[RMDB]
RNA sequence: GGGAACGACUCGAGUAGAGUCGAAAACGCACCACCGGGCGGCGCCAUGUCCGUUCCCGCUGUAGCGCACGGCGCAUCUUUUCCGGGUGGCGGGUGUAGCGCCACCGGGCCCACGGAGCGUGCGGACCUGGUGGUGAGUUUUCGAACUCACCACCAGAAAAGAAACAACAACAACAAC
Reactivity to DMS in 0.01 (KOAc 150mM, MgCl2 10mM, bicine 150mM(pH8.5), 24C), signal-to-noise 2, nucleotides 027 to 126: c010g020c020a010c020c140a150c000c000g020g010g070c080g000g000c010g020c010c050a060u000g010u010c040c020g020u000u010c000c010c000g000c140u010g020u000a160g010c030g030c020a140c210g020g000c020g050c020a120u000c030u000u000u000u020c160c010g000g000g010u030g010g010c000g010g000g000u000g020u000a080g010c020g030c000c000a030c000c010g000g000g020c050c050c030a130c090g000g020a070g010c120g030u000g010c030g010g000a110c130
Reactivity to 2A3 in 0.01 (KOAc 150mM, MgCl2 10mM, bicine 150mM(pH8.5), 24C), signal-to-noise 2, nucleotides 027 to 126: c000g010c000a010c010c000a000c020c050g000g050g000c180g010g000c010g040c000c000a060u080g030u000c030c000g020u020u030c000c000c020g020c150u180g090u230a050g030c000g000c030a130c190g300g000c000g040c020a100u110c090u070u250u140u080c050c010g060g000g020u040g040g000c000g000g010g000u060g020u040a010g020c000g000c010c000a000c000c000g000g000g030c000c010c000a080c090g120g020a090g040c080g000u030g070c000g010g040a040c020